An RNA of 177 nucleotides, treated with DMS and 2A3 and read out base by base. For DMS the reverse transcriptase was MarathonRT. Values cover nucleotides 27 to 126.
[RMDB]
RNA sequence: GGGAACGACUCGAGUAGAGUCGAAAAGAUAUGGACUAGGCGAUGAGCCACGGGUCGGAAACGACCCUAUGGCGAGCCUACAUGUCCUAAGUCGACGGAUCGCGUUGCCUUCGGGCAACGCGAUCAAGAAAAUAGCUAACUUCGGUUAGCUAUUUUCAAAAGAAACAACAACAACAAC
Reactivity to DMS in 0.01 (KOAc 150mM, MgCl2 10mM, bicine 150mM(pH8.5), 24C), signal-to-noise 3, nucleotides 027 to 126: g000a050u000a300u000g000g010a010c010u010a040g010g000c010g010a170u010g020a290g000c010c010a030c300g010g000g010u000c000g010g000a040a080a190c000g010a010c000c000c000u000a010u000g020g010c000g010a170g000c000c000u000a040c280a090u010g010u000c000c000u010a030a120g010u000c010g010a060c210g000g020a000u000c000g010c000g000u000u000g000c000c010u000u010c180g000g020g000c000a010a010c060g050c000g020a000u000c020a010a080
Reactivity to 2A3 in 0.01 (KOAc 150mM, MgCl2 10mM, bicine 150mM(pH8.5), 24C), signal-to-noise 1, nucleotides 027 to 126: g010a000u050a030u080g020g010a030c050u020a030g000g000c020g270a300u170g200a180g030c000c000a010c020g010g000g000u000c020g000g020a080a050a010c000g010a000c020c040c000u030a070u120g000g020c050g060a010g000c000c000u010a070c040a120u150g000u000c000c000u010a080a010g040u020c030g010a050c120g140g000a000u000c010g000c000g010u010u030g120c000c000u110u140c300g050g000g000c000a020a000c000g020c020g000a010u000c000a010a000

The 2A3 profile rests on 3,041 reads. The reactions ran in a buffer of 150 mM KOAc, 10 mM MgCl2 and 150 mM bicine (pH 8.5), at 24 C. Source: RMDB library TTRDEL, as collected in RNAgym.